An RNA of 177 nucleotides, treated with DMS and 2A3 and read out base by base. For DMS the reverse transcriptase was MarathonRT.
RNA sequence: GGGAACGACUCGAGUAGAGUCGAAAAUGCGUUUUUUAAUUUCAAGUCGAGCAUUCUCAUCGGCUGUUCAGGAUGUUUCCUCGACUUCAUCUGGCGAAUCCAUCGAUACACGAAGAGAAUUAUGGCGUAUAGGUCGGUAGUUCGCUACCGACCUAUAAAAAGAAACAACAACAACAAC
Reactivity to DMS in 0.01 (KOAc 150mM, MgCl2 10mM, bicine 150mM(pH8.5), 24C), signal-to-noise 2, nucleotides 027 to 126: u040g040c010g000u000u010u000u030u050u050a030a050u000u000u000c100a030a070g020u000c010g000a170g020c110a160u000u010c030u010c010a100u000c030g000g030c130u000g000u000u000c150a030g080g000a100u000g000u000u000u020c030c020u020c060g000a060c030u000u000c080a000u020c050u010g000g010c090g000a060a060u010c030c030a150u000c090g000a040u020a060c070a120c050g000a040a020g020a050g000a020a020u010u020a090u020g000g000c060g000
Reactivity to 2A3 in 0.01 (KOAc 150mM, MgCl2 10mM, bicine 150mM(pH8.5), 24C), signal-to-noise 2, nucleotides 027 to 126: u090g000c020g020u060u000u000u060u000u060a210a200u040u030u150c080a050a000g030u020c000g020a010g090c030a050u020u000c020u000c050a120u070c020g160g000c040u170g070u190u110c040a010g040g000a020u040g050u010u080u100c030c000u020c050g030a040c010u010u040c060a090u010c020u050g030g000c000g020a020a050u050c000c050a030u040c090g030a030u050a140c080a010c060g060a060a030g020a030g010a100a010u100u060a070u240g010g000c010g030
The data come from the RNA Mapping Database (RMDB), library OK1LIB. For 2A3, 920 sequencing reads were counted. 2A3 adducts were read by reverse transcription with SuperScript II with manganese.